Notes:
Structure probing data (2A3 and DMS) for a 177-nucleotide construct. For 2A3, 3,292 sequencing reads were counted. The reactions ran in a buffer of 150 mM KOAc, 10 mM MgCl2 and 150 mM bicine (pH 8.5), at 24 C. The data come from the RNA Mapping Database (RMDB), library OK2TST. For DMS the reverse transcriptase was MarathonRT.
RNA sequence: GGGAACGACUCGAGUAGAGUCGAAAAGAUCGCGGCGUCGGACCCACACUGCUACUGUGCCCGAUGUCGUUGGUGGGCAACUGGCAGCAGGAAGCGGCCAGGUUUGCACCCAACCUGCGGGUGUACGACAGCUCCUAGUAUUCGUACUAGGAGCUGUAAAAGAAACAACAACAACAAC
Reactivity to 2A3 in 0.01 (KOAc 150mM, MgCl2 10mM, bicine 150mM(pH8.5), 24C), signal-to-noise 3, nucleotides 027 to 126: g040a040u050c020g000c020g040g000c040g010u030c000g000g060a060c000c120c000a000c010a000c020u230g040c060u170a100c090u130g020u060g030c030c000c000g030a030u030g070u110c060g000u010u040g000g000u090g020g020g000c000a040a030c020u010g000g000c000a010g000c000a010g240g240a230a020g030c000g030g000c020c000a010g000g050u040u040u050g000c010a020c000c010c010a020a030c000c020u080g040c070g040g000g030u040g020u050a060c060g050
Reactivity to DMS in 0.01 (KOAc 150mM, MgCl2 10mM, bicine 150mM(pH8.5), 24C), signal-to-noise 3, nucleotides 027 to 126: g010a050u000c060g010c000g010g000c050g010u000c040g000g010a170c030c110c040a110c160a060c190u010g020c110u000a050c130u010g010u000g000c110c000c010g000a070u000g010u000c080g010u000u000g000g020u000g000g000g010c050a050a060c020u010g000g000c000a030g020c000a210g010g020a140a130g020c010g000g000c020c010a040g000g010u020u000u000g000c000a070c030c000c000a070a040c030c040u010g030c070g010g010g010u000g000u010a070c190g000